[RMDB]
RNA sequence: GGGAACGACUCGAGUAGAGUCGAAAAGAUAUGGACACGCUGGAGAUCGUACACCCGAAGAACAAAUCAUUUCGGAAACGAAAUGAUUUGGGAGGGUUAACGAUCGAUGAAAGCGUGUCCUAAGUCAGACCACUAAAUUGUUCGCAAUUUAGUGGUCAAAAGAAACAACAACAACAAC
Reactivity to DMS in 0.01 (KOAc 150mM, MgCl2 10mM, bicine 150mM(pH8.5), 24C), signal-to-noise 2, nucleotides 027 to 126: g030a050u030a300u000g000g000a000c010a000c000g030c050u000g030g020a050g000a010u000c020g030u000a200c300a120c000c000c020g000a090a120g040a240a220c010a010a020a000u000c000a010u000u000u000c010g010g000a070a090a180c010g000a010a010a020u000g000a020u000u000u000g000g000g000a160g000g000g010u000u000a230a050c030g000a040u000c000g020a040u030g000a140a160a020g000c000g000u000g010u020c000c000u000a010a040g010u010c050a100
Reactivity to 2A3 in 0.01 (KOAc 150mM, MgCl2 10mM, bicine 150mM(pH8.5), 24C), signal-to-noise 1, nucleotides 027 to 126: g030a020u100a060u160g000g000a010c000a000c000g020c020u010g030g050a090g010a010u000c020g000u020a020c030a000c230c040c000g160a300a070g060a050a040c000a000a000a000u000c000a010u000u000u010c010g000g050a050a040a040c000g000a000a000a000u000g000a000u000u010u020g000g000g040a030g010g030g010u020u010a120a050c010g000a000u000c020g030a090u010g050a010a010a020g030c000g020u000g000u020c000c010u000a000a010g010u010c000a010